[RMDB]
An RNA of 177 nucleotides, treated with 2A3 and DMS and read out base by base. For 2A3 the reverse transcriptase was SuperScript II with manganese. Values cover nucleotides 27 to 126. The RNA was probed in 150 mM KOAc, 10 mM MgCl2 and 150 mM bicine (pH 8.5) at 24 C. DMS adducts were read by reverse transcription with MarathonRT.
RNA sequence: GGGAACGACUCGAGUAGAGUCGAAAAUGAUUAAGAUAUGGAGUUCGCUAGUGCCUACCUCCCCACCUCAAGUCGGAAACGACUUGAGAGGGUAGAGCACUUGGACCGAACUCCUAAGUCGAGGAAACUUAAUGUGGUUGUUCGCAACCACAUUAAGAAAAGAAACAACAACAACAAC
Reactivity to 2A3 in 0.01 (KOAc 150mM, MgCl2 10mM, bicine 150mM(pH8.5), 24C), signal-to-noise 2, nucleotides 027 to 126: u130g040a040u270u250a230a130g010a070u120a050u250g000g020a000g010u010u000c010g010c040u030a000g000u010g000c020c010u000a000c020c000u080c050c000c000c000a030c000c000u020c000a010a010g000u000c010g030g000a090a050a130c000g020a010c000u000u000g000a000g000a000g000g000g000u010a010g030a060g010c000a000c000u000u080g030g100a040c060c070g000a000a000c010u030c000c000u020a070a040g020u010c010g040a100g080g170a150a170a080
Reactivity to DMS in 0.01 (KOAc 150mM, MgCl2 10mM, bicine 150mM(pH8.5), 24C), signal-to-noise 4, nucleotides 027 to 126: u000g030a180u030u000a110a160g000a080u010a300u010g020g000a010g000u010u000c000g030c060u000a010g020u000g000c010c010u000a010c000c000u010c050c030c010c050a300c080c000u000c000a000a010g010u010c000g000g000a140a080a210c000g020a010c000u000u000g030a010g020a100g020g000g010u000a000g000a240g010c000a000c000u000u010g030g000a090c300c030g010a020a010c000u010c000c000u000a020a110g020u010c010g000a180g000g010a200a150a240